[RMDB]
RNA sequence: GGGAACGACUCGAGUAGAGUCGAAAAUUCCCCCCGAGACAUACCGCAGUAUGACCCGUCCGGAGGUUGGCGGUGGGGUAGAGCACUGAUAGGAGGAUCCGGGGGGUGACACCCUCGCCCUCCUGUCAGUUACUUAUUUCUUCGGAAAUAAGUAACUAAAAGAAACAACAACAACAAC
Reactivity to 2A3 in 0.01 (KOAc 150mM, MgCl2 10mM, bicine 150mM(pH8.5), 24C), signal-to-noise 9, nucleotides 027 to 126: u020u000c010c000c000c000c000c010g100a060g040a080c050a070u160a030c020c020g040c040a020g080u190a110u230g060a050c010c000c020g110u170c060c050g160g060a100g110g020u030u080g050g000c010g000g020u050g020g010g000g000u090a050g030a020g090c070a030c110u010g000a010u010a010g000g010a010g000g010a010u060c060c010g000g000g000g000g020g000u010g010a000c010a070c020c000c000u000c000g000c000c000c000u000c000c000u000g000u000c000
Reactivity to DMS in 0.01 (KOAc 150mM, MgCl2 10mM, bicine 150mM(pH8.5), 24C), signal-to-noise 9, nucleotides 027 to 126: u010u000c000c000c000c030c020c010g010a140g010a120c130a100u020a030c020c080g010c060a200g010u020a060u030g000a060c030c000c020g010u020c080c080g010g010a110g010g010u010u000g010g010c040g000g010u000g000g000g000g010u010a080g000a130g020c170a090c040u000g000a010u010a010g000g000a020g000g000a040u010c300c000g000g000g000g000g000g000u000g000a160c150a210c000c000c000u000c010g010c300c000c000u000c000c000u000g000u000c000
The record gives the reactivity of an RNA of 177 nucleotides to 2A3 and DMS. DMS adducts were read by reverse transcription with MarathonRT. The RNA was probed in 150 mM KOAc, 10 mM MgCl2 and 150 mM bicine (pH 8.5) at 24 C. For 2A3 the reverse transcriptase was SuperScript II with manganese.